[RMDB]
Source information
This 177-nucleotide RNA was probed chemically with DMS. For DMS the reverse transcriptase was MarathonRT.
RNA sequence: GGGAACGACUCGAGUAGAGUCGAAAAGAGGCUUAUCAAGAGAGGUAGAGGGACUGGCCCGAUGAUACCCGGCAACCAGAAAUGGUGCCAAUUCCUGCAGCGGAAACGUUGAAAGAUGAGCCAACAAUCCUCAGGAAUUUUUCGAAAUUCCUGAGGAAAAAGAAACAACAACAACAAC
Reactivity to DMS in 0.01 (KOAc 150mM, MgCl2 10mM, bicine 150mM(pH8.5), 24C), signal-to-noise 2, nucleotides 027 to 126: g000a160g010g010c000u010u000a010u000c000a100a110g020a190g010a050g000g020u000a040g010a080g030g000g030a300c150u010g000g010c020c010c000g000a110u030g000a130u000a050c040c050c000g000g010c020a030a070c050c000a010g000a060a090a140u010g000g000u000g000c010c010a040a090u020u000c000c020u000g000c050a000g010c010g000g010a090a060a090c010g010u000u000g000a130a090a110g020a010u010g010a000g000c000c000a080a050c180a100a090
For DMS, 2,905 sequencing reads were counted. The reactions ran in a buffer of 150 mM KOAc, 10 mM MgCl2 and 150 mM bicine (pH 8.5), at 24 C.